[RMDB]
RNA sequence: GGGAACGACUCGAGUAGAGUCGAAAACGGUUACUCCCCGCACUAACAGCAGCAUCAGAGCCGUCGCGAACAUGGGGCCGGAUGCAGCUCGGGUUUUUCGACGUGUUUAUGGAAAUUGCCGGGUGUAUAUUUAGUGCAGCUUCGGCUGCACUAAAUAAAAAGAAACAACAACAACAAC
Reactivity to DMS in 0.01 (KOAc 150mM, MgCl2 10mM, bicine 150mM(pH8.5), 24C), signal-to-noise 1, nucleotides 027 to 126: c110g000g000u000u000a050c110u000c020c000c000c180g000c080a070c100u020a110a150c090a060g020c070a050g020c010a030u020c030a060g010a120g030c000c000g010u040c080g050c120g030a040a090c080a130u000g030g020g030g000c000c040g020g040a040u000g010c030a100g020c010u000c000g020g020g010u010u000u010u010u010c020g020a040c060g040u000g020u000u000u020a060u020g010g000a010a070a080u010u000g000c040c050g020g000g040u000g010u010a070